Chemical mapping of a 177-nucleotide RNA with 2A3 and DMS. The data come from the RNA Mapping Database (RMDB), library OK1LIB. DMS adducts were read by reverse transcription with MarathonRT. The DMS profile rests on 3,661 reads. For 2A3, 2,125 sequencing reads were counted. The RNA was probed in 150 mM KOAc, 10 mM MgCl2 and 150 mM bicine (pH 8.5) at 24 C.
RNA sequence: GGGAACGACUCGAGUAGAGUCGAAAAGAUGCGUCGUGGAAGUCCCGUGACGCAACAUCCACGGUCCGCGGAAGUACCUCGGCCGGCGGGGAGUUGCGUUGGGAGAUUCGGCGGGCUUUGCCGUGGGCCCGCUUGCAACGUUCGCGUUGUAAGCGGGAAAAGAAACAACAACAACAAC
Reactivity to 2A3 in 0.01 (KOAc 150mM, MgCl2 10mM, bicine 150mM(pH8.5), 24C), signal-to-noise 2, nucleotides 027 to 126: g050a020u040g000c000g030u010c000g000u030g020g030a040a000g070u000c000c000c000g030u050g010a010c000g000c000a000a020c000a020u000c000c000a000c000g000g000u150c010c000g000c010g050g000a070a000g100u240a180c000c000u010c000g000g000c000c000g010g000c040g010g010g020g000a070g010u000u010g000c000g020u010u030g000g020g000a060g000a120u030u080c010g020g000c000g010g010g020c000u010u030u090g040c000c000g020u080g010g000g000
Reactivity to DMS in 0.01 (KOAc 150mM, MgCl2 10mM, bicine 150mM(pH8.5), 24C), signal-to-noise 2, nucleotides 027 to 126: g020a030u020g000c020g020u010c000g000u020g000g020a080a070g000u000c010c000c000g000u030g030a010c010g030c000a030a000c010a120u030c010c000a140c000g000g000u150c050c000g000c300g000g000a300a030g080u090a300c000c000u020c000g000g000c010c010g000g010c080g000g020g000g000a020g020u000u010g000c010g000u000u020g000g000g000a020g000a200u000u010c040g000g000c000g030g000g000c000u050u010u010g000c020c010g030u040g000g000g000